[RMDB]
RNA sequence: GGGAACGACUCGAGUAGAGUCGAAAAGAUAUGGACGCACUAAGAAUCCGUUUGACGUAGCUCGGAAACGAGCUACCGAGGGGAAUUUAUGUGCGUCCUAAGUCAAACUUUAGGUUCGCCUAAAGAACUGAUGUAAGACCUUCGGGUCUUACAUCAGAAAAGAAACAACAACAACAAC
Reactivity to DMS in 0.01 (KOAc 150mM, MgCl2 10mM, bicine 150mM(pH8.5), 24C), signal-to-noise 2, nucleotides 027 to 126: g000a040u010a300u000g000g000a040c010g000c000a010c000u000a150a130g010a090a080u000c020c000g010u000u010u000g010a300c300g000u010a010g000c010u010c000g010g000a210a070a190c000g000a020g000c000u000a000c010c000g000a170g000g000g010g000a020a090u000u000u010a150u030g020u000g020c000g010u000c000c010u010a000a070g020u000c020a150a100a180c030u000u000u000a000g000g010u000u020c260g000c020c000u020a000a020a010g010a120a300
Reactivity to 2A3 in 0.01 (KOAc 150mM, MgCl2 10mM, bicine 150mM(pH8.5), 24C), signal-to-noise 1, nucleotides 027 to 126: g020a000u090a040u080g010g020a010c010g000c000a000c020u050a140a060g050a120a130u020c080c150g300u080u110u210g070a030c040g000u010a000g000c000u000c000g000g000a020a100a030c020g000a020g020c000u000a000c010c000g010a110g080g100g010g020a020a050u040u050u030a220u300g020u030g000c000g000u010c010c010u000a010a000g000u000c010a090a050a000c000u000u030u060a020g030g030u000u040c300g170c010c000u030a040a010a010g030a150a200